[RMDB]
RNA sequence: GGGAACGACUCGAGUAGAGUCGAAAAAGAACUCUCGUUAAGGAACUCGGCAAAAUGACCCCGUAACUUCGGGAGAAGGGGUGCUUUUUAGGGUGAAUAGCCCGGAAAAGCCGCAGUGAAUAGGCCCGAAUGCGUAUCAUUUCGAUGAUACGCAUUCAAAAGAAACAACAACAACAAC
Reactivity to 2A3 in 0.01 (KOAc 150mM, MgCl2 10mM, bicine 150mM(pH8.5), 24C), signal-to-noise 1, nucleotides 027 to 126: a010g050a080a080c010u020c010u040c050g080u080u120a020a020g060g030a040a010c010u010c060g020g000c050a060a000a060a300u120g050a120c040c030c000c000g010u010a030a060c000u040u060c080g000g030g000a020g000a040a060g030g020g000g010u050g020c000u000u030u000u060u140a090g010g020g010u060g050a070a110u100a220g020c040c020c000g000g000a020a030a020a000g020c010c030g050c070a000g060u020g040a090a030u090a100g060g000c000c010c020
Reactivity to DMS in 0.01 (KOAc 150mM, MgCl2 10mM, bicine 150mM(pH8.5), 24C), signal-to-noise 3, nucleotides 027 to 126: a110g010a160a120c030u000c020u000c030g010u010u000a060a070g020g010a190a090c010u010c170g010g000c030a060a050a100a110u010g000a110c030c020c010c050g000u000a100a150c040u000u000c100g010g000g010a040g020a140a100g020g000g010g010u000g010c020u000u000u000u000u000a110g040g000g020u000g000a140a060u000a200g000c000c000c000g010g000a020a020a050a060g000c010c080g000c140a050g000u000g000a110a130u010a040g010g000c020c040c050